[RMDB]
RNA sequence: GGGAACGACUCGAGUAGAGUCGAAAAGGCAGAGCAGUCAAACCCAGCGCUGUAACACAGUUUGUACACGGGGACGAGCAGUGUCAAGAGCAAAUAAGCUUAGAUGAUCUGAUGGCAAACGACACGGUCGAGAAGACUUGUUCGCAAGUCUUCUCGAAAAAGAAACAACAACAACAAC
Reactivity to DMS in 0.01 (KOAc 150mM, MgCl2 10mM, bicine 150mM(pH8.5), 24C), signal-to-noise 2, nucleotides 027 to 126: g030g010c060a030g010a140g000c060a050g000u000c080a100a140a120c050c000c010a120g020c140g000c010u000g020u000a060a070c090a300c060a070g000u000u000u000g010u010a070c080a080c140g000g000g010g020a060c080g010a070g020c070a040g030u010g000u000c040a070a080g010a070g000c040a060a080a070u010a080a130g010c020u010u000a050g000a100u000g000a040u000c060u000g010a090u010g010g000c050a030a090a060c120g000a030c070a040c080g000g000
Reactivity to 2A3 in 0.01 (KOAc 150mM, MgCl2 10mM, bicine 150mM(pH8.5), 24C), signal-to-noise 2, nucleotides 027 to 126: g080g030c040a010g020a020g060c050a020g030u080c040a030a050a130c030c010c020a040g040c020g000c120u020g030u160a100a030c080a000c000a150g030u050u180u110g070u130a030c020a020c060g060g040g010g000a020c020g010a020g010c050a010g030u030g040u030c030a070a060g040a020g040c070a040a000a290u200a080a020g040c010u030u030a070g010a140u160g020a030u010c020u050g000a010u070g080g000c000a070a050a000c050g050a000c040a010c020g070g060